The record gives the reactivity of an RNA of 207 nucleotides to 2A3 and DMS. The data come from the RNA Mapping Database (RMDB), library OK3TST. For DMS the reverse transcriptase was MarathonRT. 2A3 adducts were read by reverse transcription with SuperScript II with manganese.
[RMDB]
RNA sequence: GGGAACGACUCGAGUAGAGUCGAAAAACCAUCCACAUAUACUAUUAACUCAGCAUGCGAAAGGAUGGAGUACGUACGGAAACCAUCCUACCUGGCGAUGUACGGAUGGGAAAGCAUGCCAGGACACAUAACUGUAAUGAGCCACAUAUGUGUCCCCCAACGCUUACAACUUCGGUUGUAAGCGUUGAAAAGAAACAACAACAACAAC
Reactivity to 2A3 in 0.01 (KOAc 150mM, MgCl2 10mM, bicine 150mM(pH8.5), 24C), signal-to-noise 5, nucleotides 027 to 156: a000c010c020a030u010c030c010a070c040a100u200a060u070a150c090u210a180u300u150a170a100c080u050c080a030g010c010a020u040g030c050g100a170a080a040g010g000a010u000g000g020a030g070u080a040c090g040u030a040c090g090g010a100a020a000c000c010a000u020c000c010u000a050c000c010u060g120g020c070g110a090u100g040u090a020c080g020g020a010u030g000g020g020a060a040a000g010c000a030u010g020c010c030a000g000g020a000c000a000c000a010u110a110a110c030u070g000u060a130a130u080g060a040g070c080c050a040c030a020u050a020u020g000u000g020u020c020c000c000c000
Reactivity to DMS in 0.01 (KOAc 150mM, MgCl2 10mM, bicine 150mM(pH8.5), 24C), signal-to-noise 1, nucleotides 027 to 156: a130c000c000a080u000c000c040a110c070a110u000a050u000a170c050u070a100u000u000a060a180c060u040c020a080g000c010a070u040g000c020g020a050a120a040g010g010a050u000g020g010a180g010u000a040c050g020u000a110c150g000g000a170a150a110c010c000a010u020c010c040u030a050c040c140u000g060g010c050g010a160u000g040u000a030c050g000g000a100u010g020g020g000a050a040a120g020c050a000u000g000c000c020a060g000g000a090c000a010c000a000u000a020a110c110u000g000u000a100a070u000g000a090g000c060c160a080c110a100u000a000u000g020u000g000u000c000c020c070c070